[RMDB]
RNA sequence: GGGAACGACUCGAGUAGAGUCGAAAAUUUGAGCCGACAUUAAUUGCUGUGCCAGACAAUCAUCACAAAUUAGCACAAGAAGAAAUAUUUGGACCAGUGUUAACAGUGAUUAAAGUGAAGGACGAUCGACAAGGACCUCGUUCGCGAGGUCCUUGUCAAAAGAAACAACAACAACAAC
Reactivity to 2A3 in 0.01 (KOAc 150mM, MgCl2 10mM, bicine 150mM(pH8.5), 24C), signal-to-noise 1, nucleotides 027 to 126: u260u010u100g000a000g010c000c000g010a000c010a000u000u010a050a010u000u180g000c010u000g040u030g030c000c000a040g000a040c040a250a210u140c040a000u080c000a000c040a140a000a030u080u080a030g000c080a000c100a020a000g090a120a050g050a040a230a000u270a050u050u000u020g000g000a000c060c060a140g220u060g000u130u000a000a000c000a030g000u000g000a090u030u030a150a000a000g070u000g030a000a000g000g000a000c180g000a000u050c050
The record gives the reactivity of an RNA of 177 nucleotides to 2A3. Conditions: 150 mM KOAc, 10 mM MgCl2 and 150 mM bicine (pH 8.5), 24 C. For 2A3, 387 sequencing reads were counted. It was measured as part of the RMDB library OK1LIB.